[RMDB]
Annotation:
Structure probing data (2A3 and DMS) for a 207-nucleotide construct. For DMS the reverse transcriptase was MarathonRT. For DMS, 3,759 sequencing reads were counted.

RNA sequence: GGGAACGACUCGAGUAGAGUCGAAAAUGGACACACAGCUGCAUCACCCACUGAGCUGUGCAGCUGCUCCACUGGUGAGCAGACAAGUCCUACCAGGUUGUCAAAUUGUGGAACUUCUAGGGAUACAGAUGAAGGAGACCCAGAACAAGCUGCGAAGGAAGGAUAAUACUUUCGAGUAUUAUCCUUCAAAAGAAACAACAACAACAAC
Reactivity to 2A3 in 0.01 (KOAc 150mM, MgCl2 10mM, bicine 150mM(pH8.5), 24C), signal-to-noise 3, nucleotides 027 to 156: u090g000g000a020c010a000c000a000c000a050g030c000u170g070c020a130u060c040a080c030c020c000a070c100u050g020a000g010c010u000g000u000g000c000a030g010c000u000g000c000u010c000c020a120c110u080g070g020u220g030a000g000c000a050g020a050c020a040a050g000u000c000c010u000a040c000c030a020g020g040u020u020g040u070c020a040a080a110u070u070g000u010g070g040a070a050c030u070u020c030u070a140g010g040g020a060u110a160c050a050g090a150u170g040a150a020g020g010a020g010a030c010c010c010a000g010a000a020c030a040a020g030c020u030g010c070g040a070a030g080
Reactivity to DMS in 0.01 (KOAc 150mM, MgCl2 10mM, bicine 150mM(pH8.5), 24C), signal-to-noise 3, nucleotides 027 to 156: u010g020g030a070c080a300c060a050c010a030g020c010u010g090c020a110u000c120a060c030c000c040a140c110u000g000a070g040c010u010g010u000g000c010a090g030c020u010g000c040u000c050c110a300c120u010g070g050u000g030a170g020c020a070g010a100c080a110a120g010u000c020c020u000a180c020c030a140g020g000u010u000g000u010c010a060a160a150u000u010g020u010g030g020a130a100c030u000u000c010u000a040g010g000g020a160u000a130c000a100g020a100u000g010a130a130g050g010a110g040a170c020c000c000a100g040a090a050c050a030a090g020c010u000g000c030g000a130a190g010